[RMDB]
RNA sequence: GGGAACGACUCGAGUAGAGUCGAAAAGCUAGUCGGAGACGACUAGCAUCGAUCAGUUCGCUGAUCGUAAGGAGCAGUCUUACGCAGUCGACGCUCCGAUAGGCAUGGCGGACUGCGCUACUGUAAAAUCAGGAUAAUUAAUUAAUGAAGCCAUGCGAGCCCUCAUAUAGUUCGCUAUAUGAGGGCUAAAAGAAACAACAACAACAAC
Reactivity to DMS in 0.01 (KOAc 150mM, MgCl2 10mM, bicine 150mM(pH8.5), 24C), signal-to-noise 3, nucleotides 027 to 156: g030c010u010a000g050u010c000g000g010a300g000a300c020g010a040c000u000a030g010c020a030u000c020g000a010u010c000a030g010u010u010c300g040c040u000g010a030u010c010g020u000a060a110g020g000a060g010c040a080g010u000c010u000u010a120c040g040c000a060g010u010c000g030a140c060g060c010u030c000c010g000a090u000a040g020g020c050a020u010g010g020c010g020g000a050c030u000g020c000g050c000u000a090c020u020g010u000a080a140a110a110u010c030a040g000g010a180u000a080a130u010u000a070a170u020u010a120a190u010g010a080a200g020c000c000a030u010g010c040g020
Reactivity to 2A3 in 0.01 (KOAc 150mM, MgCl2 10mM, bicine 150mM(pH8.5), 24C), signal-to-noise 6, nucleotides 027 to 156: g000c000u000a000g000u000c000g010g030a040g010a110c010g010a010c000u010a000g010c000a010u030c010g000a000u000c000a010g050u060u100c140g020c120u000g000a000u000c000g000u010a060a130g020g010a000g010c120a060g040u000c010u020u030a010c030g010c000a010g010u010c010g020a010c010g000c000u000c000c010g010a130u100a050g080g000c010a010u000g010g000c010g020g010a000c000u000g000c020g010c040u130a030c010u010g040u080a040a070a100a200u200c020a000g040g040a040u050a130a060u270u090a080a050u140u070a040a060u160g050a060a000g000c000c010a000u000g000c000g010

Overview:
Structure probing data (DMS and 2A3) for a 207-nucleotide construct. For DMS, 5,783 sequencing reads were counted. The reactions ran in a buffer of 150 mM KOAc, 10 mM MgCl2 and 150 mM bicine (pH 8.5), at 24 C. The data come from the RNA Mapping Database (RMDB), library OK3TST.